[RMDB]
RNA sequence: GGGAACGACUCGAGUAGAGUCGAAAAUAUCCGGCUGCUUGAUCGCAUGGAAAAUGGUGAUGUGCUUAUUGUCACUAAGCUGGACCGCCUUGGGCGUAAUGCCAUGGAUAUCAGGAAAACGGUUGAGCUCUAUCUCCAAAUUCGUUUGGAGAUAGAGAAAAGAAACAACAACAACAAC
Reactivity to DMS in 0.01 (KOAc 150mM, MgCl2 10mM, bicine 150mM(pH8.5), 24C), signal-to-noise 9, nucleotides 027 to 126: u010a110u000c010c000g010g020c120u000g010c020u000u000g010a040u000c180g010c010a020u000g010g010a050a060a170a140u000g010g000u000g000a120u010g010u000g010c080u010u010a110u020u000g010u010c020a030c040u010a110a260g000c030u000g000g010a140c170c020g010c020c010u010u000g010g010g010c010g000u010a060a090u010g000c010c010a040u000g000g000a120u000a050u010c050a060g000g000a050a070a110a150c050g010g010u000u000g010a140g010
Reactivity to 2A3 in 0.01 (KOAc 150mM, MgCl2 10mM, bicine 150mM(pH8.5), 24C), signal-to-noise 5, nucleotides 027 to 126: u100a020u000c000c010g020g030c070u080g020c020u050u040g030a010u030c030g000c160a020u030g010g090a050a070a050a080u160g000g030u110g030a060u080g040u020g030c040u120u190a140u280u260g100u160c000a010c020u030a110a010g000c010u030g020g130a130c030c010g000c000c020u110u120g140g070g000c010g010u060a090a030u150g010c000c010a010u010g010g000a040u040a040u100c010a000g030g020a040a090a030a040c040g050g030u050u100g040a020g000
Notes: An RNA of 177 nucleotides, treated with DMS and 2A3 and read out base by base. As a SHAPE reagent, 2A3 marks flexible, mostly unpaired nucleotides at the ribose 2'-OH. For DMS, 14,785 sequencing reads were counted. 2A3 adducts were read by reverse transcription with SuperScript II with manganese.